[RMDB]
RNA sequence: GGGAACGACUCGAGUAGAGUCGAAAACGUGAAGGGCGAGCUUUUGUCCGGAAUGGUUCCGCCGUGAUCGGGCCAUGCAAUAGUUGCCAACGACAACUAUGCUCCGGUUGCUCAGGCAGCGUAACGCACAAUGGAACAACCUUCGGGUUGUUCCAAACUUGAUACAUCGGUUCGCCGAUGUAUCAAGAAAAGAAACAACAACAACAAC
Reactivity to 2A3 in 0.01 (KOAc 150mM, MgCl2 10mM, bicine 150mM(pH8.5), 24C), signal-to-noise 4, nucleotides 027 to 156: c040g010u030g040a060a060g070g040g030c010g030a090g000c030u010u120u110u200g080u090c010c000g000g030a040a030u060g000g010u190u300c010c020g000c030c030g210u190g050a160u110c020g000g000g000c020c020a030u060g000c020a050a300u000a030g000u000u000g020c020c050a140a040c170g060a120c020a000a000c030u000a000u020g000c000u010c010c000g030g000u030u110g000c020u010c030a020g110g000c010a020g010c020g010u080a020a050c040g010c030a040c030a070a220u080g010g000a010a000c000a000a000c010c000u040u050c130g060g000g000u010u000g000u000u010c000c000a000a000a000
Reactivity to DMS in 0.01 (KOAc 150mM, MgCl2 10mM, bicine 150mM(pH8.5), 24C), signal-to-noise 1, nucleotides 027 to 156: c040g010u000g010a110a100g020g020g020c000g010a070g010c070u000u000u000u000g010u000c030c060g040g030a140a070u000g000g030u000u000c040c000g030c070c110g020u010g020a060u000c020g010g050g010c030c010a040u000g010c060a110a110u000a000g010u000u000g020c020c030a130a130c190g040a110c000a000a000c010u000a030u000g020c060u020c020c010g000g000u000u010g000c040u000c010a120g000g070c010a100g010c080g020u000a080a140c110g020c040a100c070a100a240u020g020g000a040a020c000a020a000c000c010u000u000c300g030g000g010u000u000g010u010u000c000c010a010a000a050